[RMDB]
An RNA of 177 nucleotides, treated with 2A3 and DMS and read out base by base. It was measured as part of the RMDB library OK1LIB. In probing experiments dimethyl sulfate is read out at A N1 and C N3, which are open when not base-paired. For 2A3 the reverse transcriptase was SuperScript II with manganese. The reactions ran in a buffer of 150 mM KOAc, 10 mM MgCl2 and 150 mM bicine (pH 8.5), at 24 C.
RNA sequence: GGGAACGACUCGAGUAGAGUCGAAAAGUACAGGUGAACCAUUCGAUAACCGUAUUUCAGUAGGUGUAAUGUACAUGUUGAAACUUGCGCACAUGGUUGAUGAUAAAUUACAUGCGCGUUCAACAGGGCUAAUCCCAAUCUUCGGAUUGGGAUUAGCAAAAGAAACAACAACAACAAC
Reactivity to 2A3 in 0.01 (KOAc 150mM, MgCl2 10mM, bicine 150mM(pH8.5), 24C), signal-to-noise 2, nucleotides 027 to 126: g030u000a030c050a010g000g000u090g080a010a000c020c000a040u120u160c000g030a050u070a080a050c090c000g000u030a130u000u100u040c070a080g000u060a140g050g000u080g110u190a160a210u100g000u000a030c000a090u030g000u000u020g000a040a150a000c020u150u090g000c050g000c020a010c040a210u140g130g170u080u040g110a120u050g020a020u140a210a100a110u130u150a030c000a000u040g000c000g010c000g000u000u000c000a000a010c000a000g150g000
Reactivity to DMS in 0.01 (KOAc 150mM, MgCl2 10mM, bicine 150mM(pH8.5), 24C), signal-to-noise 2, nucleotides 027 to 126: g000u000a030c150a030g040g010u020g010a150a140c120c050a180u030u020c150g000a060u030a120a150c030c070g050u000a050u000u040u000c090a150g040u000a040g000g020u000g000u030a140a110u030g000u020a130c040a020u020g000u020u000g040a000a040a130c040u000u010g000c000g040c000a010c130a050u020g000g000u030u010g020a000u060g000a130u000a120a010a020u000u000a040c020a030u000g020c100g060c000g000u000u000c010a000a080c050a000g000g000